[RMDB]
RNA sequence: GGGAACGACUCGAGUAGAGUCGAAAAACAAUAAAUUAGCACCUAAGGUCUUCUUUACUCCUUCUAGAAUCAGGGGUCAGGGCCUCACAUUGAGAAUGUGGAUUGCAUUUUCGAAGGCUUCAGCUGUGCCUGGGAGGUGGUAUGGUAACACCACAAACAGUCGUCCAUUAUUCGUAAUGGACGACUGAAAAGAAACAACAACAACAAC
Reactivity to 2A3 in 0.01 (KOAc 150mM, MgCl2 10mM, bicine 150mM(pH8.5), 24C), signal-to-noise 1, nucleotides 027 to 156: a000c120a070a050u270a190a090a050u230u100a060g050c040a060c030c020u060a070a040g040g030u000c010u170u010c000u070u160u030a030c000u010c000c000u000u090c030u050a050g080a080a020u070c030a020g000g000g070g110u060c080a010g030g060g010c000c030u060c020a100c010a000u100u150g020a040g010a020a010u030g010u050g190g270a100u090u300g020c020a030u040u040u010u010c030g030a000a010g010g000c000u100u190c120a060g020c000u050g030u070g050c000c070u000g020g030g030a010g000g040u040g040g010u050a040u020g060g000u040a000a020c010a010c070c000a010c050a000a060a000